Chemical mapping of a 177-nucleotide RNA with 2A3. Source: RMDB library OK1LIB, as collected in RNAgym. Values cover nucleotides 27 to 126.

[RMDB]
RNA sequence: GGGAACGACUCGAGUAGAGUCGAAAACACUGAAUGUCCGUGAUCCUGUAUCAGGACGUCCUGUCAUGAAAGAGCCAUGGCCAGAGGCUAUGUUAUGCCCUACAUACAAGACUGCUGUGCCUAGCACGCGUCAGGGUGGGUUCGCCCACCCUGACGCAAAAGAAACAACAACAACAAC
Reactivity to 2A3 in 0.01 (KOAc 150mM, MgCl2 10mM, bicine 150mM(pH8.5), 24C), signal-to-noise 2, nucleotides 027 to 126: c050a000c020u110g070a110a120u030g010u000c060c030g220u040g030a020u040c100c150u090g080u200a020u100c060a000g000g060a000c010g000u100c000c030u040g060u070c000a090u090g150a100a050a030g120a060g000c000c000a110u140g000g000c000c020a060g050a050g080g000c000u040a060u160g010u070u130a030u020g020c000c010c020u010a030c000a020u020a030c040a030a020g030a010c000u020g000c000u000g140u070g040c000c040u000a090g030c000a000c120